Structure probing data (2A3) for a 207-nucleotide construct.

RNA sequence: GGGAACGACUCGAGUAGAGUCGAAAAGCAUGUUUAUGUGAACCUAAGAAUGAAUUUCAGUGACUGUAGAUUAGAAGGACUGAUUAUAGCAUCGGCUGCUUGGUGUUCACUUUAUUUGCAUCUGUGAGUUUCCAACAAGCCCUAAGUUUACUGACAACGGGCUAAUUUAUUUCGAUAAAUUAGCCCGAAAAGAAACAACAACAACAAC
Reactivity to 2A3 in 0.01 (KOAc 150mM, MgCl2 10mM, bicine 150mM(pH8.5), 24C), signal-to-noise 1, nucleotides 027 to 156: g020c040a040u020g040u040u130u080a180u100g030u040g010a020a030c000c000u000a020a020g100a140a100u160g110a100a200u010u000u150c000a010g010u030g170a140c010u000g040u120a040g050a270u120u100a050g180a260a050g020g060a020c000u030g020a020u040u090a130u020a050g000c050a110u050c160g260g020c010u000g000c010u040u000g000g000u090g020u020u010c000a000c000u000u160u080a070u050u080u060g000c010a030u050c080u000g100u000g020a040g000u000u080u150c000c000a000a000c010a010a060g000c000c030c000u040a090a090g000u020u010u130a160c010u020g040a000c010a060a040

The RNA was probed in 150 mM KOAc, 10 mM MgCl2 and 150 mM bicine (pH 8.5) at 24 C. The 2A3 profile rests on 482 reads. 2A3 adducts were read by reverse transcription with SuperScript II with manganese. It was measured as part of the RMDB library OK3TST.